The record gives the reactivity of an RNA of 177 nucleotides to DMS and 2A3. For 2A3 the reverse transcriptase was SuperScript II with manganese.
[RMDB]
RNA sequence: GGGAACGACUCGAGUAGAGUCGAAAAGGGGUUAGCGUUUGCAAAACGCUGUUAUUGCAAUGAUCUGGUUUUAGCGCAAGUAGGUCCGAAAUCCAGAUCAACAUUUCGGACCUCCGCGCUAAUAAAAAUCUGAAGUUAUGUUCGCAUAACUUCAGAUAAAAGAAACAACAACAACAAC
Reactivity to DMS in 0.01 (KOAc 150mM, MgCl2 10mM, bicine 150mM(pH8.5), 24C), signal-to-noise 9, nucleotides 027 to 126: g010g000g010g010u010u010a030g020c020g020u000u000u010g020c230a080a060a040a020c010g010c030u000g000u010u000a060u010u000g010c080a070a080u010g000a150u000c050u010g000g010u000u000u000u000a010g010c010g010c000a070a100g020u010a020g010g010u000c000c000g010a010a010a010u000c130c140a150g010a140u010c170a060a080c210a040u000u000u000c010g000g000a020c000c000u000c060c130g010c000g010c000u000a000a000u000a010a060a060a070
Reactivity to 2A3 in 0.01 (KOAc 150mM, MgCl2 10mM, bicine 150mM(pH8.5), 24C), signal-to-noise 4, nucleotides 027 to 126: g000g000g020g020u060u070a000g000c010g010u020u050u170g120c040a110a110a000a010c030g010c060u020g030u070u080a110u060u070g030c040a040a090u110g020a090u070c020u050g080g040u010u050u020u040a010g010c010g000c010a100a060g030u090a010g120g000u000c000c000g010a000a010a000u050c060c050a050g040a190u090c010a000a010c010a000u000u020u000c000g000g000a010c020c010u000c010c010g030c010g000c000u000a000a000u010a010a020a000a010